An RNA of 177 nucleotides, treated with 2A3 and DMS and read out base by base. DMS adducts were read by reverse transcription with MarathonRT.
RNA sequence: GGGAACGACUCGAGUAGAGUCGAAAAGAAAAGAUAAUAUGAGCCGAAAUAUUAUCGAACUACGACGCAGUAGGAAGUAUUAUAGACGGCAAUAUAAUACGAAAGUAGUAGCGUCUACGAAAAGAAAGGGAAAUAGAUUGUUCGCAAUCUAUUUCCCAAAAGAAACAACAACAACAAC
Reactivity to 2A3 in 0.01 (KOAc 150mM, MgCl2 10mM, bicine 150mM(pH8.5), 24C), signal-to-noise 3, nucleotides 027 to 126: g110a010a060a000a000g000a000u000a060a000u000a000u030g050a040g080c040c060g080a050a100a000u000a000u020u000a010u010c010g000a020a030c020u040a040c070g050a010c010g010c050a040g030u180a050g060g170a150a020g020u000a010u010u030a020u020a010g150a040c040g070g070c020a050a000u030a010u020a080a000u020a010c000g070a170a150a050g070u070a020g000u020a050g070c000g010u000c000u000a040c080g130a080a050a030a070g180a060a050a100
Reactivity to DMS in 0.01 (KOAc 150mM, MgCl2 10mM, bicine 150mM(pH8.5), 24C), signal-to-noise 3, nucleotides 027 to 126: g000a110a090a080a080g000a000u000a000a000u000a050u000g010a090g020c050c090g020a090a140a010u000a000u000u000a000u010c000g010a070a170c070u000a050c130g010a010c030g000c010a130g000u030a100g010g010a140a180g000u000a010u000u000a020u010a020g010a050c080g000g000c000a110a060u000a020u000a000a010u000a010c000g010a130a120a090g010u000a070g030u040a100g000c010g000u010c000u000a110c150g010a070a040a080a110g010a120a080a120
The DMS profile rests on 4,454 reads. Reactivities are rounded to 0.1 and cut off at 0 and 3. It was measured as part of the RMDB library OK1LIB. Reactivities are given for positions 27 through 126.